[RMDB]
RNA sequence: GGGAACGACUCGAGUAGAGUCGAAAACAUUAAUCGGAAUAUCACUUGUAUCGAUAUCUAUUUUUGUAGACGGCACUUUAAAAACAUCAGUAAAUUGUCUUGUUACCUGUUUAAAUUCACUCAAAUCAUCUACAUGACAAUUCGUUGUCAUGUAGAUAAAAGAAACAACAACAACAAC
Reactivity to 2A3 in 0.01 (KOAc 150mM, MgCl2 10mM, bicine 150mM(pH8.5), 24C), signal-to-noise 6, nucleotides 027 to 126: c010a010u080u140a060a030u120c090g040g040a130a050u030a020u070c010a040c100u090u160g100u170a120u160c050g010a010u010a020u060c020u030a100u040u080u020u070u080g040u020a030g010a060c030g010g040c010a010c040u100u100u140a050a110a030a020a010c030a050u090c020a000g040u040a020a120a150u080u060g040u000c000u010u040g040u030u030a080c000c010u040g110u050u080u060a050a100a050u120u090c040a040c070u080c030a060a060a110u120c020
Reactivity to DMS in 0.01 (KOAc 150mM, MgCl2 10mM, bicine 150mM(pH8.5), 24C), signal-to-noise 5, nucleotides 027 to 126: c030a050u010u000a040a030u010c100g020g000a110a060u010a040u000c030a140c130u000u020g020u010a120u020c100g000a030u000a050u000c030u000a050u010u010u000u000u000g010u000a070g010a120c080g020g010c050a050c070u010u000u000a020a070a080a080a060c060a040u000c100a060g010u010a030a050a070u000u000g000u000c040u000u000g000u000u000a070c030c030u000g010u000u000u000a040a060a060u010u010c110a070c090u000c080a050a060a100u010c130
An RNA of 177 nucleotides, treated with 2A3 and DMS and read out base by base. The RNA was probed in 150 mM KOAc, 10 mM MgCl2 and 150 mM bicine (pH 8.5) at 24 C. High DMS reactivity at an A or C suggests that its Watson-Crick edge is free.